[RMDB]
RNA sequence: GGGAACGACUCGAGUAGAGUCGAAAAAUAAGUCCUUUCGAGGACUUAUAAUGCUGCCCAAAGAGGACCUGGGGGUCUCUGGGCUGCUAAACUCAUCAGCCGUGGCUUUGGGGUUCGCCCCAAAGAAAUAACACAUAGGAUUCGUCCUAUGUGUUAUAAAAGAAACAACAACAACAAC
Reactivity to DMS in 0.01 (KOAc 150mM, MgCl2 10mM, bicine 150mM(pH8.5), 24C), signal-to-noise 5, nucleotides 027 to 126: a020u000a000a000g010u000c000c000u000u000u010c170g010a020g020g000a010c000u000u000a010u010a060a110u000g010c030u000g000c000c000c000a040a110a110g010a100g010g020a030c020c030u010g020g020g030g010g010u000c000u000c040u000g000g000g010c000u000g000c020u010a060a100a080c040u000c030a100u010c070a050g020c040c030g010u000g010g010c000u000u000u000g000g000g000g010u000u010c240g010c000c000c000c000a000a000a000g000a060a100
Reactivity to 2A3 in 0.01 (KOAc 150mM, MgCl2 10mM, bicine 150mM(pH8.5), 24C), signal-to-noise 4, nucleotides 027 to 126: a000u000a010a000g000u000c000c000u020u040u100c200g120a010g000g000a000c000u010u000a010u000a010a050u110g000c020u020g010c010c000c000a070a200a020g090a040g070g040a050c060c080u230g240g120g090g070g000u010c010u000c010u010g010g020g020c010u020g000c010u020a090a070a070c030u030c040a120u030c030a050g110c060c020g090u080g080g000c000u020u000u010g010g000g000g020u030u050c140g110c020c000c000c020a000a000a000g000a010a090